[RMDB]
RNA sequence: GGGAACGACUCGAGUAGAGUCGAAAAAGGGGGAGAUGCUAGGAGUAGGAGGCGACCGAAGCGAGGGGGAAAGUAAAGAAAGCAACGGGGCUAGCGAGUGGAUGUUCCACCCCCCAGCGGUGCCGAGGUAGGACCCACUUCGGUGGGUCCAAAAGAAACAACAACAACAAC
Reactivity to DMS in 0.01 (KOAc 150mM, MgCl2 10mM, bicine 150mM(pH8.5), 24C), signal-to-noise 3, nucleotides 027 to 129: a130g030g000g010g000g010a030g010a050u020g040c190u050a000g000g000a060g040u040a070g010g000a070g040g000c150g020a020c060c030g020a070a050g020c180g020a020g000g060g010g000g120a090a000a000g030u020a030a050a100g090a020a070a080g040c040a090a090c120g030g020g040g000c040u010a110g020c110g050a050g000u010g010g020a070u020g020u030u080c040c000a100c000c000c000c000c000c000a140g040c080g050g030u010g040c060c020g010a070g010g000u020a050
Reactivity to 2A3 in 0.01 (KOAc 150mM, MgCl2 10mM, bicine 150mM(pH8.5), 24C), signal-to-noise 1, nucleotides 027 to 129: a000g000g000g000g000g000a050g000a020u050g030c060u070a100g000g000a060g040u080a050g020g040a000g020g000c000g000a010c000c010g030a020a000g070c020g000a050g000g000g010g000g000a020a010a010g030u080a030a010a000g070a000a080a020g020c000a030a030c030g010g000g010g010c000u080a050g050c010g040a000g010u000g010g090a070u130g120u190u020c000c000a020c000c000c000c000c000c040a010g000c040g000g030u020g060c000c000g020a000g000g030u070a060